[RMDB]
RNA sequence: GGGAACGACUCGAGUAGAGUCGAAAAGGUUACCGGCUUGAUCCUCGGCGCUGCAUUGGCAAUGUUCUUGUUUAGUCGCCGUUUGCAGGCCAGCGUGUACGACCGUGCAGAAGGCCAGGCAGGUGCAGGACGUAAUGGUUUUCGAACCAUUACGUCCAAAAGAAACAACAACAACAAC
Reactivity to DMS in 0.01 (KOAc 150mM, MgCl2 10mM, bicine 150mM(pH8.5), 24C), signal-to-noise 2, nucleotides 027 to 126: g020g000u000u010a080c020c040g010g020c000u000u000g020a090u000c010c040u000c100g040g020c000g030c030u010g010c030a040u000u020g030g010c030a110a080u000g000u000u010c120u010u010g020u010u000u020a110g010u010c060g000c010c020g000u000u000u010g010c010a090g010g020c040c040a100g020c110g030u000g020u000a060c070g000a060c090c100g000u000g010c070a080g010a090a070g010g010c280c020a040g020g000c020a020g010g000u000g020c000a130
Reactivity to 2A3 in 0.01 (KOAc 150mM, MgCl2 10mM, bicine 150mM(pH8.5), 24C), signal-to-noise 2, nucleotides 027 to 126: g050g030u090u130a050c010c020g020g010c020u020u030g050a050u170c000c000u010c070g050g000c150g010c100u010g000c000a010u070u100g010g000c010a090a110u180g020u180u160c060u270u150g200u250u180u110a110g040u030c070g030c030c020g170u000u020u020g000c010a020g030g010c000c010a010g010c050g050u170g000u030a030c140g120a160c130c050g040u020g000c000a000g000a260a010g070g000c020c000a020g020g000c000a010g000g050u080g060c010a030

Chemical mapping of a 177-nucleotide RNA with DMS and 2A3. Conditions: 150 mM KOAc, 10 mM MgCl2 and 150 mM bicine (pH 8.5), 24 C. It was measured as part of the RMDB library OK2TST.